[RMDB]
RNA sequence: GGGAACGACUCGAGUAGAGUCGAAAACUAUUUAUAGACAGAACAGUGGAAAACGUAUAUCGCUAUAAACCUUAUACCCCGACUCUUCCAGUCGUACAAUUCCACAUAGGCGAGGCAUAAGCGAAAGAGUCCCAUCAUAGUUCGCUAUGAUGGGACUAAAAGAAACAACAACAACAAC
Reactivity to 2A3 in 0.01 (KOAc 150mM, MgCl2 10mM, bicine 150mM(pH8.5), 24C), signal-to-noise 2, nucleotides 027 to 126: c020u000a030u020u120u030a040u010a010g090a000c070a050g020a140a000c050a080g030u010g160g070a240a100a040a000c020g030u060a070u030a040u090c000g000c040u010a000u010a060a050a010c010c000u070u130a020u070a180c000c000c000c030g020a000c000u020c000u030u000c000c000a010g010u000c000g000u020a000c120a000a060u010u010c000c030a070c020a030u070a030g080g000c050g000a030g030g000c050a120u090a170a040g000c000g120a000a050a040g060
Reactivity to DMS in 0.01 (KOAc 150mM, MgCl2 10mM, bicine 150mM(pH8.5), 24C), signal-to-noise 2, nucleotides 027 to 126: c050u000a060u070u010u000a120u000a060g000a090c060a270g040a040a040c120a150g000u000g000g000a040a030a020a140c080g010u000a030u010a100u000c090g000c000u010a010u010a070a090a110c050c030u000u040a020u000a110c080c110c070c000g030a010c020u000c050u000u000c020c040a080g000u000c030g070u030a070c110a030a180u000u040c000c000a080c050a060u010a040g010g000c020g010a070g000g000c070a160u000a010a070g010c030g010a050a030a150g000
Notes:
The data come from the RNA Mapping Database (RMDB), library OK1LIB. An RNA of 177 nucleotides, treated with 2A3 and DMS and read out base by base. DMS adducts were read by reverse transcription with MarathonRT. The reactions ran in a buffer of 150 mM KOAc, 10 mM MgCl2 and 150 mM bicine (pH 8.5), at 24 C.